[RMDB]
RNA sequence: GGGAACGACUCGAGUAGAGUCGAAAAAGCGCUAGAUAUGUACAUGGGUAUUCCCCCUUAUCUGUGUACUAUAUCUGAGUGGACUUGCUUGAUAGGGGGAGUAGUGCAAGUUUGUUUGGUGCGCGAAGUGUAUAUUAAUAUUCGUAUUAAUAUACACAAAAGAAACAACAACAACAAC
Reactivity to DMS in 0.01 (KOAc 150mM, MgCl2 10mM, bicine 150mM(pH8.5), 24C), signal-to-noise 5, nucleotides 027 to 126: a190g000c000g010c000u010a040g000a010u000a000u000g000u000a000c000a000u000g010g000g010u010a050u020u010c010c000c010c000c000u010u000a010u010c000u020g020u000g000u000a010c000u060a020u000a010u000c010u010g010a090g010u000g000g000a010c000u000u000g010c000u020u020g000a150u020a030g000g010g000g000g010a040g000u040a070g010u030g000c010a000a020g000u000u000u000g000u000u000u000g010g020u000g010c010g020c010g000a070a110
Reactivity to 2A3 in 0.01 (KOAc 150mM, MgCl2 10mM, bicine 150mM(pH8.5), 24C), signal-to-noise 4, nucleotides 027 to 126: a000g010c010g000c000u010a000g000a000u000a000u020g000u000a000c000a000u010g010g000g020u030a020u040u050c000c000c000c000c000u010u030a010u040c000u010g000u000g000u000a000c040u040a010u000a000u000c030u030g050a020g060u040g000g010a020c010u000u020g000c000u030u040g040a020u080a030g000g000g000g010g010a000g060u070a000g000u010g010c000a000a000g000u000u010u010g010u010u020u050g050g010u040g000c010g000c010g000a070a020

Description: This 177-nucleotide RNA was probed chemically with DMS and 2A3. Values cover nucleotides 27 to 126. The reactions ran in a buffer of 150 mM KOAc, 10 mM MgCl2 and 150 mM bicine (pH 8.5), at 24 C. The DMS profile rests on 39,941 reads. DMS adducts were read by reverse transcription with MarathonRT. Source: RMDB library OK1LIB, as collected in RNAgym. For 2A3 the reverse transcriptase was SuperScript II with manganese.